An RNA of 177 nucleotides, treated with DMS and 2A3 and read out base by base. The reactions ran in a buffer of 150 mM KOAc, 10 mM MgCl2 and 150 mM bicine (pH 8.5), at 24 C. The DMS profile rests on 2,028 reads.
[RMDB]
RNA sequence: GGGAACGACUCGAGUAGAGUCGAAAAGAUAUGGAACCCUCACGUGGCAACAGCUCGGAAACGAGACAUGCCAAGUGAUGGGUUCCUAAGUCAAAGACCCACGUGCAGUUCGCUGCACGUGGGUCAAGACUAGCAUCAUGUUCGCAUGAUGCUAGUCAAAAGAAACAACAACAACAAC
Reactivity to DMS in 0.01 (KOAc 150mM, MgCl2 10mM, bicine 150mM(pH8.5), 24C), signal-to-noise 2, nucleotides 027 to 126: g000a040u010a300u000g010g000a000a000c000c000c000u000c000a000c000g000u010g000g020c000a020a040c300a230g000c000u000c000g010g000a080a090a200c010g010a020g010a050c090a150u010g030c000c000a090a030g000u010g000a020u010g020g010g000u000u000c000c000u010a010a070g010u010c030a080a090a160g010a010c000c000c000a010c000g000u000g000c000a020g010u000u030c270g000c000u010g010c000a000c030g030u010g010g000g000u000c010a000a030
Reactivity to 2A3 in 0.01 (KOAc 150mM, MgCl2 10mM, bicine 150mM(pH8.5), 24C), signal-to-noise 2, nucleotides 027 to 126: g000a010u080a070u100g010g000a000a000c010c010c000u000c010a010c000g000u020g020g000c030a100a110c110a300g000c000u020c010g050g000a050a060a040c000g010a000g020a070c020a090u090g000c000c010a000a010g010u010g000a190u170g000g020g010u000u010c000c010u010a000a000g000u010c010a120a000a140g010a020c010c040c000a020c040g010u030g040c000a000g020u040u180c240g120c230u000g000c030a000c020g030u010g000g000g000u020c000a000a010
About this RNA:
For 2A3, 3,448 sequencing reads were counted.